[RMDB]
RNA sequence: GGGAACGACUCGAGUAGAGUCGAAAAGUCAUACACGGUGUAUGUGUGCCAGUAUGAGAGGCAAGGAAGGAAGGAGGAGCACUGCCUUCUGCGCACAAAUGCCAUCUGUUGCUCCGCAUUUGAGCAAAGUGCUCGGGCCUUUCGAGGCCCGAGCACUAAAAGAAACAACAACAACAAC
Reactivity to 2A3 in 0.01 (KOAc 150mM, MgCl2 10mM, bicine 150mM(pH8.5), 24C), signal-to-noise 1, nucleotides 027 to 126: g070u090c070a000u010a090c000a070c300g020g020u100g150u090a210u020g210u070g140u110g000c060c000a040g060u070a030u060g000a010g000a010g260g000c040a060a000g110g000a020a020g040g000a050a200g000g060a040g000g000a000g000c050a000c040u170g000c000c000u010u010c000u140g000c000g090c000a070c040a040a070a000u010g010c000c020a020u020c000u050g050u010u100g000c010u050c040c000g020c150a040u180u220u000g020a000g090c110a130a120

Conditions: 150 mM KOAc, 10 mM MgCl2 and 150 mM bicine (pH 8.5), 24 C. The record gives the reactivity of an RNA of 177 nucleotides to 2A3.